[RMDB]
RNA sequence: GGGAACGACUCGAGUAGAGUCGAAAAAUGCAGGAUUGGGUAGCGGCAACCUGUAAUCAAGCGAUGCAUUCGAGGCGAGGACGAGAGCAUUGUUAGGACCUUUGGGACAAGCGACGCAUACAGUUGAUCCACACUAACGUUGGUGUCGACAUACUAUCAUUCAACUAAGGUUCGCCUUAGUUGAAUGAAAAGAAACAACAACAACAAC
Reactivity to DMS in 0.01 (KOAc 150mM, MgCl2 10mM, bicine 150mM(pH8.5), 24C), signal-to-noise 1, nucleotides 027 to 156: a040u020g020c020a020g010g000a160u000u000g000g000g020u010a080g010c080g000g130c010a040a040c090c020u030g020u030a040a110u000c000a070a100g100c030g010a080u040g020c040a080u010u010c030g040a150g030g020c050g020a090g000g000a050c060g000a190g030a090g030c080a070u000u020g040u000u000a060g000g020a070c030c040u020u010u010g000g080g020a090c050a030a150g010c000g020a070c070g000c170a130u000a130c060a060g030u030u000g000a100u000c000c020a070c050a120c160u000a040a080c140g000u010u020g020g010u000g020u010c000g020a040c100a120u010a230c070u010a230u000
Reactivity to 2A3 in 0.01 (KOAc 150mM, MgCl2 10mM, bicine 150mM(pH8.5), 24C), signal-to-noise 4, nucleotides 027 to 156: a000u070g020c020a000g000g150a190u020u030g030g030g050u040a010g030c040g040g000c010a030a050c000c010u000g030u040a020a110u070c070a070a000g070c000g070a030u090g030c060a080u030u110c050g040a050g010g040c050g010a010g000g000a000c030g020a020g000a000g080c080a070u060u070g030u050u090a020g010g050a040c010c010u040u050u060g030g010g010a030c020a020a050g030c050g070a040c040g010c020a030u070a150c040a070g020u010u020g020a040u050c010c010a060c010a010c030u090a200a040c080g050u040u030g020g020u040g010u000c010g020a010c010a060u150a050c020u060a030u010

Source: RMDB library ARCHII, as collected in RNAgym. An RNA of 207 nucleotides, treated with DMS and 2A3 and read out base by base. For DMS, 1,954 sequencing reads were counted. The RNA was probed in 150 mM KOAc, 10 mM MgCl2 and 150 mM bicine (pH 8.5) at 24 C. The 2A3 profile rests on 2,608 reads.